[RMDB]
RNA sequence: GGGAACGACUCGAGUAGAGUCGAAAAGGUCAUCCGGACGAUGCCGCGCGGCUCGGUGCGCACCAGCGCGACCGCUUCGUCGGCCGCGUCCGCUUCGACGAGCAUCGCGCGGCAAUGCGCGUAGUAAGACUAAAUACUAUUUCGAUAGUAUUUAGUCAAAAGAAACAACAACAACAAC
Reactivity to DMS in 0.01 (KOAc 150mM, MgCl2 10mM, bicine 150mM(pH8.5), 24C), signal-to-noise 9, nucleotides 027 to 126: g010g010u000c070a090u010c050c020g010g010a090c040g010a130u000g010c000c010g020c010g020c010g010g000c010u000c010g010g010u010g010c300g010c110a080c130c130a200g000c000g000c000g000a010c010c010g010c020u010u010c260g010u010c000g000g010c010c010g010c010g010u000c100c080g000c050u000u010c040g010a090c000g000a030g000c010a080u010c010g010c000g010c000g000g000c020a010a010u000g010c060g010c060g010u000a100g010u010a100a140
Reactivity to 2A3 in 0.01 (KOAc 150mM, MgCl2 10mM, bicine 150mM(pH8.5), 24C), signal-to-noise 9, nucleotides 027 to 126: g080g020u050c020a080u050c060c030g010g010a020c020g040a040u030g000c010c000g010c010g010c000g020g010c010u000c010g040g030u100g030c030g000c020a070c050c060a030g010c000g000c000g030a030c000c010g000c030u230u170c100g260u050c000g010g010c000c000g000c000g020u020c010c020g010c010u080u100c050g170a130c010g000a010g010c010a090u180c020g000c000g010c000g010g000c000a000a010u010g000c020g000c030g030u080a050g080u070a230a040